The record gives the reactivity of an RNA of 207 nucleotides to 2A3 and DMS. DMS adducts were read by reverse transcription with MarathonRT. 2A3 is a SHAPE reagent: it acylates the 2'-hydroxyl of flexible nucleotides of all four kinds. For 2A3 the reverse transcriptase was SuperScript II with manganese.

RNA sequence: GGGAACGACUCGAGUAGAGUCGAAAAGAGAGGGUAACCACCGGCGCGCGUCACAGAUAUAUCCACCGGGGGGUAAGGGGAGAAAAGGAUACAGCGCGACGAAGUUAGCACGCUGCCCCGUAAGGCUUGAAGAGUGUAGUGUUCGCACUACACUCAAGUUCAGCACUAAGUUCGCUUAGUGCUGAACAAAAGAAACAACAACAACAAC
Reactivity to 2A3 in 0.01 (KOAc 150mM, MgCl2 10mM, bicine 150mM(pH8.5), 24C), signal-to-noise 2, nucleotides 027 to 156: g050a000g000a020g000g020g030u050a030a080c070c010a040c060c000g000g010c030g000c000g000c010g130u130c060a000c010a090g160a020u070a010u010a010u210c030c010a040c060c040g010g020g000g020g010g040u110a040a040g090g020g000g000a050g030a040a070a010a020g000g010a000u030a100c030a020g010c010g030c000g040a010c010g010a020a030g070u110u130a020g060c030a000c120g030c020u040g010c000c000c010c030g000u050a070a010g040g000c010u100u090g090a160a120g000a090g000u000g010u000a000g000u000g010u020u000c050g030c030a000c000u000a000c000a000c010u000c000a000a000
Reactivity to DMS in 0.01 (KOAc 150mM, MgCl2 10mM, bicine 150mM(pH8.5), 24C), signal-to-noise 1, nucleotides 027 to 156: g010a080g000a090g010g000g010u010a100a040c000c040a060c100c020g000g040c030g020c020g000c020g000u010c210a220c060a110g020a150u000a080u000a090u010c020c060a110c060c110g000g000g010g010g000g010u000a070a110g010g000g020g050a100g000a130a100a050a140g000g020a120u010a060c030a100g000c000g000c000g000a020c010g010a100a160g020u000u050a160g010c000a060c080g060c000u010g000c000c010c000c060g000u010a120a110g010g020c040u010u040g000a100a220g000a020g000u020g000u000a020g100u020g000u000u010c240g020c020a030c010u000a000c000a020c000u010c020a000a030